[RMDB]
RNA sequence: GGGAACGACUCGAGUAGAGUCGAAAAUAACUGGCUGAACUUUGGAUAAGAUCUACGUUUGGGAUUCUUCUUGGUGAUGGAUGAUGCCUAGACCAGCCCCAGACACCCUCCCAAGCCUAAGCUCCAAGAUCAUGUAUAAGUUCGCUUGUACAUGAUCAAAAGAAACAACAACAACAAC
Reactivity to DMS in 0.01 (KOAc 150mM, MgCl2 10mM, bicine 150mM(pH8.5), 24C), signal-to-noise 9, nucleotides 027 to 126: u040a090a100c090u000g000g010c020u010g000a060a060c070u010u010u020g020g010a080u020a070a070g010a300u020c040u010a070c230g010u000u010u010g010g000g000a070u020u010c100u010u020c040u010u010g010g020u010g010a120u020g010g010a080u010g010a090u020g000c020c010u000a100g010a070c040c050a050g000c140c020c020c020a060g000a070c070a100c060c040c040u000c000c010c020a040a060g010c030c030u010a050a080g010c070u000c020c030a060a110
Reactivity to 2A3 in 0.01 (KOAc 150mM, MgCl2 10mM, bicine 150mM(pH8.5), 24C), signal-to-noise 9, nucleotides 027 to 126: u130a030a050c050u040g040g000c010u030g040a040a040c030u080u050u090g040g020a040u070a160a090g040a100u060c040u110a060c090g040u020u040u050g040g010g020a060u130u030c040u090u020c020u050u130g020g020u070g060a100u120g050g080a040u110g040a060u190g120c000c010u020a020g040a040c010c020a000g020c000c000c000c010a000g020a030c010a050c030c000c000u020c010c010c010a020a010g000c000c020u030a050a010g020c020u010c040c010a040a030

The data come from the RNA Mapping Database (RMDB), library OK1LIB.
Chemical mapping of a 177-nucleotide RNA with DMS and 2A3.
2A3 is a SHAPE reagent: it acylates the 2'-hydroxyl of flexible nucleotides of all four kinds.
For DMS the reverse transcriptase was MarathonRT.
Reactivities are given for positions 27 through 126.
The RNA was probed in 150 mM KOAc, 10 mM MgCl2 and 150 mM bicine (pH 8.5) at 24 C.